[RMDB]
RNA sequence: GGGAACGACUCGAGUAGAGUCGAAAAAUAAGGAGAUGACCAGCAGAUGUGGUCCCUGGCCUCAUGGAGGCCACAGUGGCACAGGCAAGCAUGCCAGUAAAUGCAUAGCCACACCUGGUCAUGAGUGCCGUGAUGGCAAAGCCAGAAGCUGCCAGGGGCAGCCUGGCUUGUUCGCAAGCCAGGCUGCAAAAGAAACAACAACAACAAC
Reactivity to 2A3 in 0.01 (KOAc 150mM, MgCl2 10mM, bicine 150mM(pH8.5), 24C), signal-to-noise 1, nucleotides 027 to 156: a000u160a070a000g060g010a080g020a050u050g000a020c000c000a000g050c030a000g070a190u070g020u010g000g000u100c070c050c000u010g040g000c020c000u070c090a160u180g150g020a090g030g000c070c000a030c000a000g130u150g000g020c020a000c060a040g000g040c010a050a040g150c090a100u050g010c000c010a020g060u110a020a160a030u040g000c040a090u030a090g010c060c010a000c000a000c010c000u000g000g000u000c000a000u010g010a030g000u140g000c030c030g040u150g070a070u060g020g000c050a130a050a020g020c020c030a020g000a130a000g020c100u080g000c010c000a060g000g000g000
Conditions: 150 mM KOAc, 10 mM MgCl2 and 150 mM bicine (pH 8.5), 24 C. This 207-nucleotide RNA was probed chemically with 2A3. Reactivities are given for positions 27 through 156. It was measured as part of the RMDB library OK3TST. 2A3 adducts were read by reverse transcription with SuperScript II with manganese.